This 177-nucleotide RNA was probed chemically with 2A3 and DMS.
For DMS the reverse transcriptase was MarathonRT.
It was measured as part of the RMDB libraries RFM100 and RFMREP.
RNA sequence: GGGAACGACUCGAGUAGAGUCGAAAAAGCACCUCUACGGAGGUGCAAGUCGAUGGGAGCGCCUGGAGGCGCGGCGGCCUCCUGCUUGUCGUCGGCAGCAGCGUUAUAGACGAGGUACGCCUCGUCAUUGAGUACGGUAAUUCGUUACCGUACUCAAAAAAGAAACAACAACAACAAC
Reactivity to 2A3 in 0.01 (KOAc 150mM, MgCl2 10mM, bicine 150mM(pH8.5), 24C), signal-to-noise 6, nucleotides 027 to 126: a010g010c000a010c030c000u000c000u030a090c270g110g000a000g000g000u010g000c000a010a000g010u000c000g000a010u030g030g010g020a030g010c050g030c080c130u060g040g000a020g010g020c050g020c070g090g020c030g100g030c000c000u000c000c010u010g020c020u060u040g170u190c000g000u000c000g040g000c000a010g070c030a030g040c050g060u120u140a190u130a190g000a000c000g010a000g000g020u060a030c170g060c040c000u010c000g000u000c010a000
Reactivity to DMS in 0.01 (KOAc 150mM, MgCl2 10mM, bicine 150mM(pH8.5), 24C), signal-to-noise 5, nucleotides 027 to 126: a070g000c010a010c000c000u000c000u000a110c170g030g010a010g010g020u010g020c000a010a010g030u010c030g000a010u010g000g000g010a030g010c030g020c190c220u000g010g010a030g010g000c020g000c070g010g010c130g000g000c000c000u000c000c010u000g000c000u000u000g020u010c010g010u000c010g010g000c010a120g010c120a080g010c140g000u010u010a140u030a120g000a010c000g010a020g010g020u010a110c250g010c000c010u000c000g020u000c000a030
Reactivities are given for positions 27 through 126.